The record gives the reactivity of an RNA of 177 nucleotides to 2A3 and DMS. For 2A3 the reverse transcriptase was SuperScript II with manganese. For DMS the reverse transcriptase was MarathonRT. Values cover nucleotides 27 to 126.
[RMDB]
RNA sequence: GGGAACGACUCGAGUAGAGUCGAAAACUCCUUACUAUGGAUGUUGGUGAAAUAACUUUAAGCGACCCGUCUUGAAACACGGACCAAGGAGUCUAACAUGCUUGCGAGUAUUAGGGUGUUGAAACCCACACACGUGCAUAUUCGUAUGCACGUGUGUAAAAGAAACAACAACAACAAC
Reactivity to 2A3 in 0.01 (KOAc 150mM, MgCl2 10mM, bicine 150mM(pH8.5), 24C), signal-to-noise 3, nucleotides 027 to 126: c060u030c000c010u050u050a060c030u050a140u160g040g020a000u060g020u130u020g040g020u030g010a070a080a090u140a120a080c020u040u150u130a060a000g060c000g040a030c000c030c040g000u020c040u050u090g060a060a040a000c070a000c030g070g000a010c010c030a030a100g070g010a070g070u060c020u100a040a010c010a010u050g150c030u060u080g080c020g060a010g020u020a110u090u110a020g000g010g030u110g030u050u020g030a140a090a030c000c000c000
Reactivity to DMS in 0.01 (KOAc 150mM, MgCl2 10mM, bicine 150mM(pH8.5), 24C), signal-to-noise 3, nucleotides 027 to 126: c090u000c020c030u000u040a070c150u010a080u030g000g000a050u030g010u010u000g000g020u040g000a090a080a050u020a100a160c010u000u030u000a130a170g010c070g010a140c120c000c030g000u010c010u000u000g020a100a120a100c230a060c030g000g000a080c050c020a080a100g000g000a030g000u000c000u000a060a030c140a050u010g010c060u020u020g030c060g000a050g010u010a080u010u030a080g000g000g000u010g000u010u010g010a070a110a100c000c010c000